[RMDB]
RNA sequence: GGGAACGACUCGAGUAGAGUCGAAAAUCUUUACACCGGGGCAUGACGAGUGAAACUGAUAUCUGGCAACUCAUUAUUGGGCAUCAUUUUGUAGAUUUGAAGUUCCUGUUGCCUUGCAACUAAAGGAGAUUAGCUGACCUUUCGAGGUCAGCUAAUCAAAAGAAACAACAACAACAAC
Reactivity to 2A3 in 0.01 (KOAc 150mM, MgCl2 10mM, bicine 150mM(pH8.5), 24C), signal-to-noise 1, nucleotides 027 to 126: u020c010u010u040u100a030c020a030c040c060g020g020g020g000c030a030u090g030a020c020g010a020g030u040g030a140a070a010c030u060g000a020u010a050u180c010u100g110g000c030a040a020c030u070c020a060u030u160a080u120u150g000g010g060c030a010u020c010a000u130u140u080u090g080u060a080g010a130u080u060u070g020a050a040g000u010u060c000c020u050g040u020u000g000c030c000u030u110g020c020a020a010c030u100a180a000a000g110g080a150
Reactivity to DMS in 0.01 (KOAc 150mM, MgCl2 10mM, bicine 150mM(pH8.5), 24C), signal-to-noise 1, nucleotides 027 to 126: u000c030u010u000u010a140c100a120c190c030g000g000g000g010c040a040u000g020a040c020g010a060g020u030g000a060a080a110c120u020g010a090u010a050u000c070u040g000g020c050a080a040c020u000c060a050u010u010a100u000u000g010g020g000c040a070u010c080a030u000u000u000u000g020u000a030g000a070u000u000u000g010a140a070g030u000u000c000c010u000g020u000u000g000c020c110u000u010g020c040a030a030c060u020a050a050a100g010g000a190
Conditions: 150 mM KOAc, 10 mM MgCl2 and 150 mM bicine (pH 8.5), 24 C. Chemical mapping of a 177-nucleotide RNA with 2A3 and DMS. Values cover nucleotides 27 to 126. It was measured as part of the RMDB library OK2TST.